Overview:
Source: RMDB library M2PK50, as collected in RNAgym. The record gives the reactivity of an RNA of 177 nucleotides to DMS and 2A3. The RNA was probed in 150 mM KOAc, 10 mM MgCl2 and 150 mM bicine (pH 8.5) at 24 C.
RNA sequence: GGGAACGACUCGAGUAGAGUCGAAAAUAUUACAUCUUCGGAUGUAAUAACUGGUGGUGGCUGGCUUGUUGCUAGUGGCGCAACUGUUGCCAUGUCUGCGCAAUCGCUCUGAAUUCGUUCAGAGCAAUUGGAUAUUUUCUUUCGAGAAAAUAUCCAAAAAAGAAACAACAACAACAAC
Reactivity to DMS in 0.01 (KOAc 150mM, MgCl2 10mM, bicine 150mM(pH8.5), 24C), signal-to-noise 5, nucleotides 027 to 126: u010a010u000u000a010c000a000u000c000u000u010c200g010g020a010u000g010u010a010a000u000a020a120c080u000g020g040u000g010g020u000g010g010c040u000g000g010c060u000u010g000u010u010g010c010u000a120g020u010g010g010c110g010c020a020a040c050u000g000u000u000g000c040c020a030u010g010u010c050u010g010c040g010c100a100a070u010c130g000c000u000c000u000g010a010a030u000u010c210g010u000u000c000a000g000a020g020c010a020a020
Reactivity to 2A3 in 0.01 (KOAc 150mM, MgCl2 10mM, bicine 150mM(pH8.5), 24C), signal-to-noise 2, nucleotides 027 to 126: u020a010u020u000a000c000a000u010c010u050u060c210g140g000a000u000g000u000a000a000u010a020a010c060u110g060g000u070g070g000u050g030g040c040u010g030g010c020u060u090g020u010u040g020c050u040a090g140u080g220g030c060g000c010a030a000c010u050g090u220u120g050c010c000a050u140g040u020c030u040g070c050g000c050a030a110u140c090g020c020u000c000u010g010a030a030u070u090c270g060u040u000c010a000g000a010g010c000a000a010